[RMDB]
RNA sequence: GGGAACGACUCGAGUAGAGUCGAAAAGGUGGUGUGCGUGGUGCCACGGUGUCGUGGAAGGCACGCGUAGGCCGAGUGUGAGUGGGUGCGCAAGUGGGUGCGCGAAUGCGCGGGGCGUGCGAGGUGAGUGGGUAGGUUUUUUCGAAAACCUACCCACAAAAGAAACAACAACAACAAC
Reactivity to DMS in 0.01 (KOAc 150mM, MgCl2 10mM, bicine 150mM(pH8.5), 24C), signal-to-noise 1, nucleotides 027 to 126: g000g010u030g000g000u020g000u030g020c020g060u000g030g000u000g030c020c000a080c090g030g000u030g030u010c030g010u030g010g000a200a110g000g000c020a010c030g010c010g020u000a040g040g000c020c090g020a100g050u030g030u020g000a120g000u000g030g000g000u040g020c070g080c140a000a060g000u090g020g000g050u010g010c050g040c010g000a030a150u030g000c020g020c110g000g060g000g000c090g000u000g020c120g000a110g050g000u010g000a080
Reactivity to 2A3 in 0.01 (KOAc 150mM, MgCl2 10mM, bicine 150mM(pH8.5), 24C), signal-to-noise 1, nucleotides 027 to 126: g080g010u040g030g000u030g010u010g000c000g050u060g000g140u150g090c000c000a000c000g020g080u180g000u010c080g010u190g170g080a050a030g010g010c030a000c040g200c000g000u060a090g030g000c010c000g000a060g000u090g000u000g040a100g030u180g050g010g000u110g060c050g000c020a070a080g020u040g010g060g000u140g000c050g010c040g000a030a150u150g000c030g000c020g000g010g000g020c060g000u000g000c040g000a050g030g010u090g060a070

This 177-nucleotide RNA was probed chemically with DMS and 2A3. For 2A3 the reverse transcriptase was SuperScript II with manganese. DMS adducts were read by reverse transcription with MarathonRT. The RNA was probed in 150 mM KOAc, 10 mM MgCl2 and 150 mM bicine (pH 8.5) at 24 C. Reactivities are given for positions 27 through 126.